This 177-nucleotide RNA was probed chemically with 2A3 and DMS. The reactions ran in a buffer of 150 mM KOAc, 10 mM MgCl2 and 150 mM bicine (pH 8.5), at 24 C. For 2A3, 1,339 sequencing reads were counted. DMS (dimethyl sulfate) methylates the pairing face of unpaired adenines and cytosines. The data come from the RNA Mapping Database (RMDB), library OK1LIB. Reactivities are given for positions 27 through 126.
RNA sequence: GGGAACGACUCGAGUAGAGUCGAAAAUGCCGCAGCUUCAUUAUGGUAACACCCAAGGACAUUAACGGGGAGUUUAAAAACAAAAGUGACGAGCGUCUGCCGGGGUUGCAGUGGAGAUUAGAAACCGGUAGUGCUACGAUUUCGAUCGUAGCACUACAAAAGAAACAACAACAACAAC
Reactivity to 2A3 in 0.01 (KOAc 150mM, MgCl2 10mM, bicine 150mM(pH8.5), 24C), signal-to-noise 3, nucleotides 027 to 126: u170g000c010c000g000c030a010g010c030u040u040c100a040u050u150a070u220g130g040u050a020a030c010a160c010c050c000a050a040g030g010a020c080a120u190u150a160a030c070g060g010g080g030a140g070u060u130u140a150a100a030a020a010c140a040a100a010a060g120u090g060a020c020g000a070g030c040g030u000c010u010g120c070c000g040g000g000g020u020u020g000c000a010g000u000g050g030a040g000a020u070u110a090g100a060a120a030c000c040g020
Reactivity to DMS in 0.01 (KOAc 150mM, MgCl2 10mM, bicine 150mM(pH8.5), 24C), signal-to-noise 2, nucleotides 027 to 126: u020g000c030c010g020c030a090g000c020u000u020c100a070u000u000a040u010g010g000u000a080a100c080a190c020c000c010a020a010g080g020a050c050a060u000u030a050a080c110g020g050g010g000a050g000u000u000u010a020a080a060a160a040c130a030a080a070a070g010u000g010a020c090g000a090g020c020g000u000c000u000g000c060c060g000g000g000g000u000u010g010c030a030g020u040g000g000a070g000a130u020u020a060g000a080a070a100c110c040g000